[RMDB]
This 177-nucleotide RNA was probed chemically with DMS and 2A3. For 2A3, 5,196 sequencing reads were counted. The data come from the RNA Mapping Database (RMDB), library OK1LIB. For DMS, 4,670 sequencing reads were counted. Reactivities are rounded to 0.1 and cut off at 0 and 3. For 2A3 the reverse transcriptase was SuperScript II with manganese.

RNA sequence: GGGAACGACUCGAGUAGAGUCGAAAAGCUAGCAAGUGGUGCCGAUGCGCGCUAAGGCACCAAAGCCACCGAUGACCUGUAAGGUGGCAAACAGGUCAGCUAAGAAAAGCGCGCACGCGAAAGCGGAAGCAUCCUGCUAUUUCGAUAGCAGGAUGCUAAAAGAAACAACAACAACAAC
Reactivity to DMS in 0.01 (KOAc 150mM, MgCl2 10mM, bicine 150mM(pH8.5), 24C), signal-to-noise 3, nucleotides 027 to 126: g060c040u040a090g020c050a120a100g000u040g040g010u010g030c000c000g000a060u020g020c010g020c000g030c000u000a210a170g000g000c000a000c000c000a030a040a080g020c040c020a090c000c000g040a130u020g010a030c000c010u000g000u020a230a150g010g000u000g010g050c000a020a060a010c150a080g010g010u000c020a070g030c050u020a090a130g000a070a100a070a060g000c000g000c010g020c030a070c000g000c000g000a100a080a140g000c000g000g000a070
Reactivity to 2A3 in 0.01 (KOAc 150mM, MgCl2 10mM, bicine 150mM(pH8.5), 24C), signal-to-noise 4, nucleotides 027 to 126: g050c050u080a010g100c100a300a020g060u010g060g010u000g000c000c000g000a010u150g000c000g010c000g030c000u000a010a010g010g000c020a000c000c000a000a000a000g000c000c010a010c010c000g180a210u150g040a040c000c000u010g000u050a020a000g030g000u010g030g000c000a000a000a000c040a000g000g030u030c030a010g020c070u100a090a040g110a080a150a040a000g000c000g020c000g000c000a020c000g030c000g020a110a010a040g010c000g000g010a030